[RMDB]
RNA sequence: GGGAACGACUCGAGUAGAGUCGAAAAGGCAAAGUACAAAAACACCAGCCGGCUGAACAAUGCCUGGCCACUCUGGCCUUAGGAUUGCAAUACCUUACGGGUAAGUUUAGAAAUGAGUUUCCUGUUCAGGUUUUAGGCCUGUCAUACUGUUGAGUGGGAUUACAUUGUUCUUCGGAACAAUGUAAUCAAAAGAAACAACAACAACAAC
Reactivity to DMS in 0.01 (KOAc 150mM, MgCl2 10mM, bicine 150mM(pH8.5), 24C), signal-to-noise 1, nucleotides 027 to 156: g040g020c030a080a010a100g000u000a130c050a040a120a090a130a140c070a100c020c030a100g000c030c270g010g010c000u010g010a270a110c050a030a060u010g010c000c000u010g020g040c000c030a090c100u000c250u030g030g010c000c030u000u040a030g020g000a040u000u010g000c010a060a180u000a020c020c010u010u010a040c050g070g010g030u000a030a060g000u000u000u000a130g000a100a080a070u000g000a080g020u000u000u000c010c010u000g010u020u010c020a040g010g000u010u020u000u000a110g010g030c020c010u020g000u000c040a130u000a060c050u000g020u030u000g020a160g030u000g000g000
Reactivity to 2A3 in 0.01 (KOAc 150mM, MgCl2 10mM, bicine 150mM(pH8.5), 24C), signal-to-noise 3, nucleotides 027 to 156: g000g030c050a020a060a030g100u170a140c100a080a180a120a120a040c040a070c050c020a010g000c030c020g010g000c030u060g000a110a030c030a090a060u110g150c010c040u040g010g000c040c000a040c060u100c150u120g000g000c000c000u040u090a030g000g050a070u060u070g010c030a020a050u040a100c000c020u060u060a020c060g050g010g030u100a060a050g040u050u030u130a070g070a080a170a110u140g020a040g070u030u070u060c010c010u020g050u130u060c080a020g020g000u020u040u100u140a040g020g010c020c000u040g000u070c030a070u080a280c080u100g060u090u060g040a060g110u120g050g040
The record gives the reactivity of an RNA of 207 nucleotides to DMS and 2A3. The reactions ran in a buffer of 150 mM KOAc, 10 mM MgCl2 and 150 mM bicine (pH 8.5), at 24 C. Values cover nucleotides 27 to 156. It was measured as part of the RMDB library OK3TST.